[RMDB]
RNA sequence: GGGAACGACUCGAGUAGAGUCGAAAAGAUAUGGAAUAGCAGAGGAACUACAGAGAGUAUCGGAAACGAUACGAUCUGCCGACGAAGCUAUUCCUAAGUCAAACGAACGUAGUUCGCUACGUUCGAACCAGUCAAUUAUCUUCGGAUAAUUGACUGGAAAAGAAACAACAACAACAAC
Reactivity to 2A3 in 0.01 (KOAc 150mM, MgCl2 10mM, bicine 150mM(pH8.5), 24C), signal-to-noise 4, nucleotides 027 to 126: g010a000u060a030u090g000g000a000a000u000a010g010c010a000g040a040g080g060a220a230c210u240a060c300a000g020a000g010a000g000u000a000u020c000g010g000a030a010a010c010g000a000u000a000c000g000a020u010c000u000g000c040c090g110a150c030g020a020a010g010c000u000a010u000u000c000c000u000a040a000g020u010c030a050a060a150c030g010a000a000c000g000u010a010g020u060u080c290g000c100u000a000c000g000u010u000c000g000a010a070
Reactivity to DMS in 0.01 (KOAc 150mM, MgCl2 10mM, bicine 150mM(pH8.5), 24C), signal-to-noise 5, nucleotides 027 to 126: g000a040u000a300u010g000g000a010a000u000a010g040c010a030g010a300g010g000a110a090c140u010a140c020a020g000a010g010a290g000u000a000u010c000g000g010a060a070a130c000g000a000u000a000c000g000a120u000c000u000g010c060c120g000a120c070g000a300a210g000c000u000a000u000u000c000c000u020a010a080g000u000c030a080a090a270c030g000a010a000c010g010u010a000g000u000u040c300g030c000u000a000c000g010u000u000c000g000a030a060
Chemical mapping of a 177-nucleotide RNA with 2A3 and DMS. Source: RMDB library TTRDEL, as collected in RNAgym. 2A3 adducts were read by reverse transcription with SuperScript II with manganese. The reactions ran in a buffer of 150 mM KOAc, 10 mM MgCl2 and 150 mM bicine (pH 8.5), at 24 C. The 2A3 profile rests on 12,477 reads.